An RNA of 177 nucleotides, treated with 2A3 and DMS and read out base by base. Reactivities are given for positions 27 through 126. The RNA was probed in 150 mM KOAc, 10 mM MgCl2 and 150 mM bicine (pH 8.5) at 24 C. It was measured as part of the RMDB libraries RFM100 and RFMREP. In probing experiments dimethyl sulfate is read out at A N1 and C N3, which are open when not base-paired.

[RMDB]
RNA sequence: GGGAACGACUCGAGUAGAGUCGAAAACAGUCUCAUUACAAGGCAAACGUGAUGGGGCUGUUUUCUGCGCUUAACCCCGUCUUCCAAUAAUUGGAAAAAUGCAGUGCAUUGCACUUGAUUGCACAACCCAUUACCUGAGGUUCGCCUCAGGUAAUGGAAAAGAAACAACAACAACAAC
Reactivity to 2A3 in 0.01 (KOAc 150mM, MgCl2 10mM, bicine 150mM(pH8.5), 24C), signal-to-noise 9, nucleotides 027 to 126: c000a000g010u010c000u000c000a000u000u010a010c060a110a260g300g080c080a190a150a020c120g000u010g010a000u000g000g000g000g000c000u000g000u000u000u000u000c000u000g010c040g010c030u070u070a100a090c000c010c000c010g050u020c060u030u000c010c010a050a130u180a270a230u230u120g020g030a050a040a010a000a010u110g010c030a010g010u000g000c030a070u040u070g010c030a050c180u080u200g070a090u050u050g000c010a010c000a030a070c000
Reactivity to DMS in 0.01 (KOAc 150mM, MgCl2 10mM, bicine 150mM(pH8.5), 24C), signal-to-noise 4, nucleotides 027 to 126: c000a010g010u000c010u000c000a010u000u000a000c010a120a090g020g040c220a090a120a140c170g020u010g000a010u000g000g020g000g000c000u010g010u000u000u000u000c040u000g010c100g020c080u010u020a130a140c090c000c010c040g000u010c150u000u000c010c000a050a140u040a060a130u020u000g010g000a000a020a090a100a160u010g020c020a110g000u000g000c010a050u000u010g000c020a060c260u010u010g010a050u020u000g000c000a010c030a120a160c200